[RMDB]
RNA sequence: GGGAACGACUCGAGUAGAGUCGAAAACUCCCCGCUCCUGGAGAAGGGAGACUCGGGAACGCCUAGCAUCUGAGGGACAAAGCCGCCCCCGGGCGCUCCCCUCGGAGAUCCACUGGGUGGGUUCACAUGGCUUGUAGGUUCGCCUACAAGAAAAGAAACAACAACAACAAC
Reactivity to 2A3 in 0.01 (KOAc 150mM, MgCl2 10mM, bicine 150mM(pH8.5), 24C), signal-to-noise 9, nucleotides 027 to 129: c020u040c010c000c000c010g020c000u030c000c020u090g110g080a170g040a130a080g050g050g000a010g010a010c040u040c090g030g000g010a040a020c020g020c000c010u030a030g030c020a100u000c010u020g010a020g010g010g010a010c060a050a090a010g050c120c040g010c010c030c000c020c040g040g000g000c020g010c010u010c000c000c000c000u010c000g010g010a020g000a050u070c040c020a040c050u030g000g000g030u040g020g080g000u050u040c050a070c020a130u130g110g000
Reactivity to DMS in 0.01 (KOAc 150mM, MgCl2 10mM, bicine 150mM(pH8.5), 24C), signal-to-noise 9, nucleotides 027 to 129: c130u020c000c000c000c110g020c010u000c020c010u010g010g010a100g000a150a120g000g000g000a060g000a070c080u030c100g010g000g010a100a060c070g010c030c010u030a070g030c140a130u000c010u010g000a030g010g010g010a040c070a110a100a050g030c070c050g040c030c010c010c090c240g020g010g000c020g000c040u020c050c000c000c000u000c010g000g020a030g000a050u030c050c090a110c040u010g010g020g000u010g000g000g000u030u020c030a090c030a110u040g000g000
The data come from the RNA Mapping Database (RMDB), library 15KLIB. This 170-nucleotide RNA was probed chemically with 2A3 and DMS. For 2A3 the reverse transcriptase was SuperScript II with manganese. The 2A3 profile rests on 116,980 reads. For DMS, 125,804 sequencing reads were counted.